[RMDB]
RNA sequence: GGGAACGACUCGAGUAGAGUCGAAAAAAUUCUUUUAUCAUUUCCAAUCUUACUGAUUCUUUCACUUGUGCUAAGUUUUUGGUAACGCGGAAAGAUGUUGUGACGAUAUCAAUCGAGGAAUAACCCAACGGUACUAUUACUUCGGUAAUAGUACCGUAAAAGAAACAACAACAACAAC
Reactivity to 2A3 in 0.01 (KOAc 150mM, MgCl2 10mM, bicine 150mM(pH8.5), 24C), signal-to-noise 4, nucleotides 027 to 126: a000a020u110u060c090u060u130u060u080a150u110c060a180u030u050u000c010c000a040a040u020c030u010u050a060c010u000g030a030u000u050c000u000u040u020c040a040c080u130u190g040u030g120c020u030a000a090g060u030u010u020u080u110g050g000u030a030a010c020g060c140g000g000a010a010a020g000a050u040g050u130u040g100u140g050a040c030g000a010u060a030u220c140a210a020u030c030g010a010g010g020a040a030u020a090a060c010c010c020a010
Reactivity to DMS in 0.01 (KOAc 150mM, MgCl2 10mM, bicine 150mM(pH8.5), 24C), signal-to-noise 2, nucleotides 027 to 126: a070a070u030u000c020u000u000u020u010a090u020c020a140u000u010u000c010c000a060a200u060c250u020u000a040c050u000g020a020u020u000c000u010u000u010c000a020c090u000u050g040u000g010c080u030a040a020g010u020u000u020u000u010g030g000u000a000a010c100g000c300g000g020a030a000a040g000a020u020g000u000u000g020u020g010a290c070g000a000u000a070u000c120a130a070u000c070g010a030g020g010a050a020u000a150a110c000c010c020a050
An RNA of 177 nucleotides, treated with 2A3 and DMS and read out base by base.
The 2A3 profile rests on 1,923 reads.
Reactivities are given for positions 27 through 126.
2A3 adducts were read by reverse transcription with SuperScript II with manganese.
Conditions: 150 mM KOAc, 10 mM MgCl2 and 150 mM bicine (pH 8.5), 24 C.
DMS adducts were read by reverse transcription with MarathonRT.
Source: RMDB library OK1LIB, as collected in RNAgym.